[RMDB]
RNA sequence: GGGAACGACUCGAGUAGAGUCGAAAAGAUAUGGAGCCUUGUCAGUUUGAUCACAGGCUUGGAUUUAGGCUCGGAAACGAGCCUUGUCAGCCUGUGGUUUGAACUUGGAUUUAGGCUCCUAAGUCAAAACAAAAGAGCGGUUCGCCGCUCUUUUGAAGAGCAUUAUGCAGUUCGCUGCAUAAUGCUCAAAAGAAACAACAACAACAAC
Reactivity to 2A3 in 0.01 (KOAc 150mM, MgCl2 10mM, bicine 150mM(pH8.5), 24C), signal-to-noise 2, nucleotides 027 to 156: g010a010u050a040u160g020g000a020g000c000c010u000u000g000u010c000a000g000u010u020u010g010a010u020c000a000c010a020g030g000c040u050u100g090g010a050u300u260u100a020g010g000c000u000c020g000g000a050a060a020c010g000a000g000c010c000u010u020g000u010c010a000g000c010c000u000g010u000g000g000u000u050u070g000a000a000c010u010u060g150g000a010u240u200u080a000g000g000c010u000c000c000u000a000a000g000u010c020a000a000a110a130c000a000a000a050a000g000a000g010c010g030g050u070u130c270g050c100c010g000c010u000c010u000u000u000u000g010a040a010